[RMDB]
RNA sequence: GGGAACGACUCGAGUAGAGUCGAAAAGUGCGCUAUUUCGAUAGCGCACAAAGGCGGCGAGUCUCGCUCGGCGGCGCGCCACAGCGCGCAGCGCAGCCGGAACAUAACGCCACUUCGGUGGCGUUAACCGAUUUACUUGUUUCGACAAGUAAAUCGGAAAAGAAACAACAACAACAAC
Reactivity to DMS in 0.01 (KOAc 150mM, MgCl2 10mM, bicine 150mM(pH8.5), 24C), signal-to-noise 2, nucleotides 027 to 126: g030u000g010c030g000c000u010a000u000u000u000c210g020a010u000a000g000c000g020c000a000c010a010a030a090g020g020c000g000g000c010g000a020g020u000c000u000c020g010c000u020c190g000g000c010g000g020c000g010c000g000c000c270a110c300a230g030c000g010c000g030c000a010g020c000g010c000a010g000c000c000g030g010a110a090c120a150u000a010a010c000g020c000c000a010c010u000u010c160g030g020u000g000g000c000g000u000u000a000a100
Reactivity to 2A3 in 0.01 (KOAc 150mM, MgCl2 10mM, bicine 150mM(pH8.5), 24C), signal-to-noise 1, nucleotides 027 to 126: g010u000g020c020g000c000u020a020u030u080u050c060g120a010u010a010g010c010g000c000a000c000a000a000a010g000g000c020g040g000c000g010a020g050u030c000u010c040g030c100u170c110g010g000c000g000g000c010g020c000g030c030c020a160c030a080g080c060g000c000g060c030a010g030c040g020c000a000g010c000c010g010g040a060a020c020a040u060a010a000c020g020c010c000a020c030u000u040c210g080g000u000g000g000c000g010u000u000a010a000
The record gives the reactivity of an RNA of 177 nucleotides to DMS and 2A3.
The reactions ran in a buffer of 150 mM KOAc, 10 mM MgCl2 and 150 mM bicine (pH 8.5), at 24 C.